[RMDB]
The data come from the RNA Mapping Database (RMDB), library TTRDEL. Chemical mapping of a 177-nucleotide RNA with 2A3 and DMS. Values cover nucleotides 27 to 126.
RNA sequence: GGGAACGACUCGAGUAGAGUCGAAAAGAUAUGGACGAGGAUUGAUUUCUUUGAUCUCGGAAACGAGGGAGAAAGAGAUCUCGUCCUAAGUCAAAGAGAUCUAGUCCCUUCGGGGACUAGAUCUCAACCUUUAAGAUGUGUUCGCACAUCUUAAAGGAAAAGAAACAACAACAACAAC
Reactivity to 2A3 in 0.01 (KOAc 150mM, MgCl2 10mM, bicine 150mM(pH8.5), 24C), signal-to-noise 4, nucleotides 027 to 126: g020a020u090a040u140g000g000a000c020g010a040g300g160a070u020u040g020a010u060u070u040c040u220u260u080g100a120u050c000u000c010g000g020a050a060a040c010g000a010g020g020g000a030g020a000a010a000g030a000g000a000u000c000u000c010g000u000c000c000u000a100a000g000u010c040a060a160a070g010a000g000a010u000c010u000a000g000u000c000c000c000u010u040c300g040g000g000g010a000c000u000a000g000a000u000c000u000c000a000a000
Reactivity to DMS in 0.01 (KOAc 150mM, MgCl2 10mM, bicine 150mM(pH8.5), 24C), signal-to-noise 5, nucleotides 027 to 126: g010a030u000a300u000g000g000a010c000g000a020g020g010a040u000u010g000a300u000u000u000c000u000u000u010g010a120u010c000u000c010g000g000a100a070a170c000g010a010g000g000g000a040g000a000a010a010g010a300g000a020u000c000u000c000g000u000c000c010u000a000a040g000u000c050a070a110a180g000a010g010a010u000c000u010a010g000u000c000c000c000u000u020c150g020g000g000g010a000c000u000a000g000a010u000c000u010c000a020a050
The RNA was probed in 150 mM KOAc, 10 mM MgCl2 and 150 mM bicine (pH 8.5) at 24 C.